[RMDB]
RNA sequence: GGGAACGACUCGAGUAGAGUCGAAAAUGUUUGCCCUUCGGGGCAAACAAUAGAAGCGUCACGAGCAAACGGCAAGCUCGGAAAAGGACGCAAUUGCCGUAAAUACCCUAUGUUUCGACAUAGGGAAUAACGGAGUAGAAUUCGUUCUACUCCGUUAAAAAGAAACAACAACAACAAC
Reactivity to DMS in 0.01 (KOAc 150mM, MgCl2 10mM, bicine 150mM(pH8.5), 24C), signal-to-noise 4, nucleotides 027 to 126: u000g000u000u000u000g010c000c010c000u000u020c210g040g010g010g000c000a000a000a000c000a040a070u010a080g020a210a140g010c010g000u000c020a160c010g000a030g010c020a050a080a040c020g000g010c010a110a160g000c010u010c000g000g010a030a060a110a200g010g000a020c030g010c010a060a040u010u010g020c000c000g000u000a110a070a100u020a140c000c000c000u000a000u000g000u000u000u010c200g010a040c000a020u000a000g000g010g010a020a020
Reactivity to 2A3 in 0.01 (KOAc 150mM, MgCl2 10mM, bicine 150mM(pH8.5), 24C), signal-to-noise 4, nucleotides 027 to 126: u020g000u000u000u000g000c000c000c000u000u040c250g020g000g010g000c010a000a000a000c000a000a000u140a040g160a170a040g020c020g000u020c050a040c260g020a000g000c040a260a240a010c000g010g000c010a020a010g000c000u020c030g000g010a110a150a020a020g300g000a000c020g000c020a000a040u100u080g000c000c000g020u030a020a080a020u160a060c000c000c000u000a000u000g010u010u100u090c180g030a010c000a000u000a000g000g000g020a000a000